This 177-nucleotide RNA was probed chemically with DMS.
The data come from the RNA Mapping Database (RMDB), library RFM100.
For DMS the reverse transcriptase was MarathonRT.
RNA sequence: GGGAACGACUCGAGUAGAGUCGAAAACUCGGUCAGCAUCUCGAUUGGCAAGACGUCCACUCCGGGUACGCGCCGCUCAUGCGAUGACGCCUUCAUCGCGUGAGCGGCGUGUACCUGAAGCGGACAUCUAAAAACAACCUUUCGAGGUUGUUUUUAGAAAAGAAACAACAACAACAAC
Reactivity to DMS in 0.01 (KOAc 150mM, MgCl2 10mM, bicine 150mM(pH8.5), 24C), signal-to-noise 1, nucleotides 027 to 126: c000u020c000g000g000u010c060a080g000c100a080u020c020u010c070g010a090u030u020g000g040c190a060a020g010a110c160g010u000c010c030a110c020u000c040c030g040g000g000u000a000c000g000c010g060c030c000g000c140u040c090a000u010g120c230g030a000u060g030a200c300g010c130c060u000u010c010a000u020c060g040c000g020u000g060a110g060c030g130g000c000g000u000g000u010a000c030c000u000g010a020a010g000c010g000g000a020c010a040u000